Structure probing data (2A3) for a 207-nucleotide construct. 2A3 adducts were read by reverse transcription with SuperScript II with manganese. The reactions ran in a buffer of 150 mM KOAc, 10 mM MgCl2 and 150 mM bicine (pH 8.5), at 24 C.
RNA sequence: GGGAACGACUCGAGUAGAGUCGAAAAUGGGAGUUGUAUGAGUUUUGUUAUAAAUGCAUAGGAAGUCAUAAAAAUUUAAGUAGAAGAGGAUCUGAGCCAAUGUACAUUUGUACAAGAUCACCCUUGGCCCCUGAGUGAAGAGUAGGGGGUAGGGAAACACUAUGGCGCCAUUCGUGGCGCCAUAGUGAAAAGAAACAACAACAACAAC
Reactivity to 2A3 in 0.01 (KOAc 150mM, MgCl2 10mM, bicine 150mM(pH8.5), 24C), signal-to-noise 1, nucleotides 027 to 156: u130g010g000g000a090g030u050u000g020u120a060u100g040a070g060u040u050u130u090g030u080u060a120u020a170a080a040u210g000c040a060u070a100g080g000a050a000g040u100c040a020u150a140a120a020a070a120u230u140u110a080a020g010u010a000g060a110a000g030a010g000g000a020u000c040u060g000a010g050c040c060a030a040u080g000u030a080c020a080u070u070u220g000u010a010c020a030a000g080a070u080c090a060c030c000c050u070u170g100g010c030c030c030c030u110g000a030g000u140g070a050a020g000a040g010u030a020g000g030g160g000g000u000a010g020g020g000a030a030a030